[RMDB]
The record gives the reactivity of an RNA of 207 nucleotides to 2A3.
2A3 is a SHAPE reagent: it acylates the 2'-hydroxyl of flexible nucleotides of all four kinds.
The reactions ran in a buffer of 150 mM KOAc, 10 mM MgCl2 and 150 mM bicine (pH 8.5), at 24 C.
RNA sequence: GGGAACGACUCGAGUAGAGUCGAAAAGUAGAAUCUGUCAAGCAAAACCCCAAAACCUUACACUGAGAGCAAUUAGCCUGAUUACUCUUUAAAUCAAAUCAGGCAAUAGAGAGAAACUCGAGAGGUGAAACGGGAGUAAUGUUCGCAUUACUCCCAAGGUUACUAUGGUCUUCGGACCAUAGUAACCAAAAGAAACAACAACAACAAC
Reactivity to 2A3 in 0.01 (KOAc 150mM, MgCl2 10mM, bicine 150mM(pH8.5), 24C), signal-to-noise 1, nucleotides 027 to 156: g070u070a030g090a120a090u060c030u050g160u180c200a060a040g030c050a030a100a140a220c020c000c010c010a040a000a000a080c060c000u040u030a030c020a040c070u050g040a020g000a000g080c030a060a110u040u030a090g030c000c000u000g000a000u010u020a090c050u060c050u160u240u280a060a090a060u170c060a000a000a070u000c000a000g000g000c000a000a000u020a000g030a040g030a000g020a060a070a060c000u000c020g120a150g000a030g070g090u050g050a040a060a120c030g000g000g000a000g000u000a010a000u000g030u040u020c170g000c080a020u000u000a000c010u060c010c000c000a000a000